The record gives the reactivity of an RNA of 177 nucleotides to 2A3 and DMS. The reactions ran in a buffer of 150 mM KOAc, 10 mM MgCl2 and 150 mM bicine (pH 8.5), at 24 C. For DMS the reverse transcriptase was MarathonRT. Source: RMDB library M2PK50, as collected in RNAgym. The DMS profile rests on 2,951 reads. The 2A3 profile rests on 3,798 reads. For 2A3 the reverse transcriptase was SuperScript II with manganese.
RNA sequence: GGGAACGACUCGAGUAGAGUCGAAAACAGAACUAAUUCGUUAGUUCUGGCAUAUAACCUACACCAAUUAGGUUCAAAUAAGUGGUAAAAAUAAAAAUAAAACGGGGUCUGCAUUCGUGCAGACCAAAGAUACAUAAAUGUUCGCAUUUAUGUAUCUAAAAGAAACAACAACAACAAC
Reactivity to 2A3 in 0.01 (KOAc 150mM, MgCl2 10mM, bicine 150mM(pH8.5), 24C), signal-to-noise 3, nucleotides 027 to 126: c000a000g000a010a010c000u010a020a010u080u120c150g060u070u010a000g000u010u000c000u000g000g000c040a110u300a020u060a090a020c000c000u010a020c010a010c050c000a020a020u260u000a030g010g000u050u160c050a020a050a150u050a110a060g030u040g020g010u070a030a020a040a100a120u200a050a090a060a030a050u110a070a110a060a020c070g270g030g040g000u000c000u020g000c010a030u020u080c150g070u040g000c020a000g000a000c000c000a000a000
Reactivity to DMS in 0.01 (KOAc 150mM, MgCl2 10mM, bicine 150mM(pH8.5), 24C), signal-to-noise 3, nucleotides 027 to 126: c000a000g010a000a000c000u000a010a030u000u010c170g010u010u000a000g020u000u000c000u000g000g000c170a080u010a110u000a070a060c000c000u000a040c110a080c020c020a030a030u020u000a010g000g010u000u000c160a080a070a040u000a030a040g010u000g000g000u000a010a070a070a100a130u040a040a080a080a100a110u020a070a050a080a100c170g000g010g010g020u000c000u000g000c000a040u000u010c190g020u000g000c000a000g010a000c010c000a000a020